This 177-nucleotide RNA was probed chemically with 2A3 and DMS. DMS adducts were read by reverse transcription with MarathonRT. High DMS reactivity at an A or C suggests that its Watson-Crick edge is free. The RNA was probed in 150 mM KOAc, 10 mM MgCl2 and 150 mM bicine (pH 8.5) at 24 C.

[RMDB]
RNA sequence: GGGAACGACUCGAGUAGAGUCGAAAAGCGGGUAACUUCGGUUACCCGCAAACACGCGUCUCGUCGCGUCGCCGUCGCGUCGCGGCGCGUCGCGUCGCGAGAAAAGGACGAAGUUCGCUUCGUCCAACCGUGAACAAACGUUCGCGUUUGUUCACGGAAAAGAAACAACAACAACAAC
Reactivity to 2A3 in 0.01 (KOAc 150mM, MgCl2 10mM, bicine 150mM(pH8.5), 24C), signal-to-noise 1, nucleotides 027 to 126: g000c020g000g000g000u000a000a010c010u060u070c170g040g000u030u020a000c020c020c010g000c010a000a000a010c000a000c020g030c000g000u010c000u000c010g010u010c000g000c000g010u010c000g000c020c060g300u190c270g020c050g060u060c030g020c000g000g000c000g000c010g000u010c000g000c000g000u040c050g030c050g030a080g090a060a150a020a070g000g000a000c010g000a000a000g000u050u100c210g080c050u010u010c000g000u000c000c000a000a010
Reactivity to DMS in 0.01 (KOAc 150mM, MgCl2 10mM, bicine 150mM(pH8.5), 24C), signal-to-noise 1, nucleotides 027 to 126: g000c000g020g000g020u000a010a020c000u000u010c180g000g010u000u000a010c010c000c000g030c000a010a030a040c100a020c000g020c010g030u000c000u020c000g000u000c000g020c000g000u000c000g000c020c300g010u020c240g010c040g000u000c060g010c020g000g000c020g020c010g000u000c000g020c000g010u000c040g050c070g020a150g000a080a030a170a100g000g010a010c000g000a020a000g030u000u040c270g010c010u000u000c000g000u000c000c000a000a020